The record gives the reactivity of an RNA of 177 nucleotides to 2A3.
RNA sequence: GGGAACGACUCGAGUAGAGUCGAAAAGAGGAAGUGUCUUUGAAGCGGCAAGAAUUAGAAGCAGUUUUGGUGUCAGACACACUCACUGACUCACUGCUUCUUGUUUUUCUUCUUCUUCUUCUUCUAAAAAUUCGUGACCGUUCGCGGUCACGAAUUUAAAAGAAACAACAACAACAAC
Reactivity to 2A3 in 0.01 (KOAc 150mM, MgCl2 10mM, bicine 150mM(pH8.5), 24C), signal-to-noise 1, nucleotides 027 to 126: g010a000g020g010a020a000g020u030g080u100c100u190u180u090g000a020a000g000c040g040g000c140a000a000g000a000a050u040u030a000g010a040a010g000c020a030g010u020u060u210u300g160g030u100g000u000c040a000g130a070c020a000c000a060c190u150c090a050c040u020g000a000c020u000c020a000c010u010g000c000u000u000c000u010u000g000u000u000u000u000u000c000u010u000c000u000u000c000u000u000c000u000u000c000u000u030c000u040a140a040

The 2A3 profile rests on 686 reads. Conditions: 150 mM KOAc, 10 mM MgCl2 and 150 mM bicine (pH 8.5), 24 C. The data come from the RNA Mapping Database (RMDB), library RFM100. Values are in units of 0.01, from 0 to 300, in steps of 10.